[RMDB]
RNA sequence: GGGAACGACUCGAGUAGAGUCGAAAAGCGAGGGGAUGCUGCGAGCUCGGAUGCAGCAACUAUGAGCGCCCUAAACCCACAGCAGUUUGGUGGGGCGUCUGUCUCCGGCUGCGAUCGGGACGCCAUAACGGAGAUAGGGAUUCGUCCCUAUCUCCGUAAAAGAAACAACAACAACAAC
Reactivity to 2A3 in 0.01 (KOAc 150mM, MgCl2 10mM, bicine 150mM(pH8.5), 24C), signal-to-noise 2, nucleotides 027 to 126: g070c040g000a010g010g040g010g010a020u090g050c070u030g000c030g120a160g030c040u060c050g050g030a070u170g000c000a000g000c010a000a020c020u030a080u120g090a040g060c000g030c020c020c000u090a160a120a060c010c040c030a030c040a060g110c010a090g060u130u230u250g070g000u050g010g030g010g010c000g080u030c170u160g040u010c030u010c090c010g030g000c030u050g030c010g010a070u070c020g000g000g040a070c010g000c000c020a120u080a080
Reactivity to DMS in 0.01 (KOAc 150mM, MgCl2 10mM, bicine 150mM(pH8.5), 24C), signal-to-noise 2, nucleotides 027 to 126: g010c070g000a100g000g000g000g020a130u000g000c050u000g030c010g000a080g030c050u000c070g000g000a090u010g000c020a000g030c040a080a060c160u000a050u010g010a210g010c020g000c010c000c020u000a030a090a110c050c000c180a090c120a210g020c100a090g010u010u010u000g090g000u000g000g010g000g010c010g000u000c090u010g000u000c040u000c100c100g000g020c030u000g010c030g010a110u000c090g030g000g000a050c040g000c010c050a050u010a120